RNA sequence: GGGAACGACUCGAGUAGAGUCGAAAAGAAAACGACUGGGACGUUACAGUUGGAAAAACGUCGAAGGUAGCAGGCUAAGCUACCGUUAGCCUGAAGCAUUGGUCAUAACGAUGCGUAUGACGAGAAAGGGAUUCAUAUACUUCGGUAUAUGAAUCCCAAAAGAAACAACAACAACAAC
Reactivity to DMS in 0.01 (KOAc 150mM, MgCl2 10mM, bicine 150mM(pH8.5), 24C), signal-to-noise 2, nucleotides 027 to 126: g020a110a000a080a140c080g000a030c050u000g000g010g000a040c030g010u000u000a090c070a130g010u030u060g000g000a080a040a040a030a030c020g000u000c020g020a240a170g000g010u030a030g000c020a010g000g000c060u020a040a000g000c100u030a020c070c030g030u020u000a000g010c000c000u020g000a130a070g020c130a040u050u030g010g000u000c100a050u010a020a140c010g030a070u130g010c090g030u000a040u060g000a090c000g020a050g000a060a080a120
Reactivity to 2A3 in 0.01 (KOAc 150mM, MgCl2 10mM, bicine 150mM(pH8.5), 24C), signal-to-noise 2, nucleotides 027 to 126: g060a000a090a010a000c090g000a000c000u000g000g100g050a000c060g040u070u210a120c050a000g030u090u210g080g000a100a070a000a000a040c000g030u020c000g000a070a010g020g030u030a010g080c000a000g050g050c040u010a000a000g050c000u090a060c040c050g000u000u000a000g010c000c000u010g000a060a000g060c020a060u000u060g000g040u090c040a000u070a090a140c020g230a070u170g000c080g020u050a100u090g000a020c020g000a010g020a100a090a000
An RNA of 177 nucleotides, treated with DMS and 2A3 and read out base by base. DMS (dimethyl sulfate) methylates the pairing face of unpaired adenines and cytosines. The DMS profile rests on 2,796 reads. The RNA was probed in 150 mM KOAc, 10 mM MgCl2 and 150 mM bicine (pH 8.5) at 24 C.